[RMDB]
RNA sequence: GGGAACGACUCGAGUAGAGUCGAAAAUAGGGCUGGCUACUCUUGCACAGAAUCACAUCUCGAUAAGUGUCAGUGCAAGAAGGACACUUAUACCAUUUAAUAUGCCGAGGCCACGCGGAGUACGAUCCAUAUGCUCUCCCUUCGGGGAGAGCAUAUGAAAAGAAACAACAACAACAAC
Reactivity to 2A3 in 0.01 (KOAc 150mM, MgCl2 10mM, bicine 150mM(pH8.5), 24C), signal-to-noise 2, nucleotides 027 to 126: u120a030g050g080g020c040u010g000g000c000u140a020c020u040c000u010u020g000c000a010c000a040g130a050a040u180c030a060c020a170u050c080u190c150g100a120u040a190a000g000u010g000u040c040a020g000u020g030c010a010a000g040a010a020g070g020a000c030a000c040u000u040a030u070a080c000c030a030u000u180u200a290a240u160a030u110g040c000c030g060a110g020g000c010c020a000c030g070c000g040g050a030g080u060a020c030g030a000u010c010
Reactivity to DMS in 0.01 (KOAc 150mM, MgCl2 10mM, bicine 150mM(pH8.5), 24C), signal-to-noise 3, nucleotides 027 to 126: u010a040g000g020g030c040u000g010g020c030u010a250c050u000c000u000u000g000c040a030c020a040g040a130a090u010c120a060c120a110u010c100u000c070g000a090u000a000a040g010u000g010u000c030a080g010u010g010c030a030a010g010a030a050g010g010a040c050a040c010u000u000a020u000a220c110c070a090u000u000u000a100a130u000a060u010g040c300c010g000a090g010g010c020c030a060c060g020c060g020g000a060g020u000a070c080g000a160u000c100

Source: RMDB library OK2TRN, as collected in RNAgym. An RNA of 177 nucleotides, treated with 2A3 and DMS and read out base by base. For DMS, 1,970 sequencing reads were counted. In probing experiments dimethyl sulfate is read out at A N1 and C N3, which are open when not base-paired.